RNA sequence: GGGAACGACUCGAGUAGAGUCGAAAAGAAACGCAAGGCCGCUGACCGACGGGAUAUUGUGGGGCGUACCACAGGGGACGCGGCGUUAUCACUUGCCUUUUAAGCCGACCGUCUGGGCUGCAUACAAACCACCCAACUAUCUUCGGAUAGUUGGGAAGUCCAUUUUAUUCUUCGGAAUAAAAUGGACAAAAGAAACAACAACAACAAC
Reactivity to DMS in 0.01 (KOAc 150mM, MgCl2 10mM, bicine 150mM(pH8.5), 24C), signal-to-noise 1, nucleotides 027 to 156: g000a090a060a110c070g050c030a050a070g040g000c000c040g020c010u030g030a220c040c000g000a140c020g040g000g010a190u000a080u020u000g060u000g000g020g020g030c160g040u010a140c000c010a100c080a070g000g000g000g000a300c090g000c020g030g060c050g000u000u010a060u000c120a170c000u000u020g010c020c020u020u010u000u000a060a130g020c060c020g010a070c020c020g030u000c020u010g010g010g040c000u010g010c060a110u030a110c020a020a100a090c010c050a150c000c020c000a000a050c000u010a000u000c000u000u010c300g030g020a020u000a010g020u000u030g010g010g000a010a040
Reactivity to 2A3 in 0.01 (KOAc 150mM, MgCl2 10mM, bicine 150mM(pH8.5), 24C), signal-to-noise 2, nucleotides 027 to 156: g000a020a100a000c090g000c050a030a000g110g050c000c000g040c050u050g050a050c000c000g010a050c050g010g120g000a060u120a100u190u090g030u060g010g000g070g080c110g030u090a110c000c030a040c030a050g000g000g010g010a000c010g000c000g020g030c000g000u090u050a030u040c000a000c080u010u000g010c020c060u010u180u040u050a030a000g000c010c010g070a100c000c020g050u050c020u090g030g070g010c030u030g010c050a050u120a170c020a040a140a000c040c000a010c010c000c000a020a000c000u010a000u010c000u010u020c010g090g000a000u000a000g010u000u000g000g000g000a000a000
The data come from the RNA Mapping Database (RMDB), library M2RFPK. This 207-nucleotide RNA was probed chemically with DMS and 2A3. The RNA was probed in 150 mM KOAc, 10 mM MgCl2 and 150 mM bicine (pH 8.5) at 24 C. For DMS, 2,155 sequencing reads were counted. 2A3 adducts were read by reverse transcription with SuperScript II with manganese.